[RMDB]
RNA sequence: GGGAACGACUCGAGUAGAGUCGAAAAACAUGUCUCUGGAUGCCUGGUUCCAAAGAUGUGGACCAAUGCUAGUCGCAUGUCCUGUAGCAGGAGGAGCCACGGACAAAACCCCUCAGACACUGGGUUAAGCCCAUAAUCAGUUCGCUGAUUAUGGGCUAAAAGAAACAACAACAACAAC
Reactivity to 2A3 in 0.01 (KOAc 150mM, MgCl2 10mM, bicine 150mM(pH8.5), 24C), signal-to-noise 1, nucleotides 027 to 126: a000c010a080u010g020u030c000u020c000u000g050g020a090u140g070c020c050u030g010g010u050u000c000c010a030a110a040g130a080u080g060u090g140g000a020c000c020a060a030u090g000c050u050a060g170u190c020g000c030a010u070g050u020c000c030u020g030u080a010g060c090a010g030g030a030g020g010a010g000c000c030a070c110g020g020a010c090a010a110a050a070c000c000c000c000u030c010a040g010a080c060a020c140u040g000g040g010u040u020a030
Reactivity to DMS in 0.01 (KOAc 150mM, MgCl2 10mM, bicine 150mM(pH8.5), 24C), signal-to-noise 2, nucleotides 027 to 126: a060c040a080u000g030u010c000u000c090u020g000g000a070u010g000c000c020u000g020g000u000u000c000c000a020a090a120g000a100u000g000u020g010g000a050c040c070a070a040u000g000c070u000a060g000u000c170g000c000a040u000g000u000c000c020u000g050u000a120g000c020a030g030g040a300g010g000a040g000c030c010a020c220g000g010a110c060a020a020a090a110c100c020c010c010u000c080a080g020a050c070a040c130u000g010g000g010u010u010a050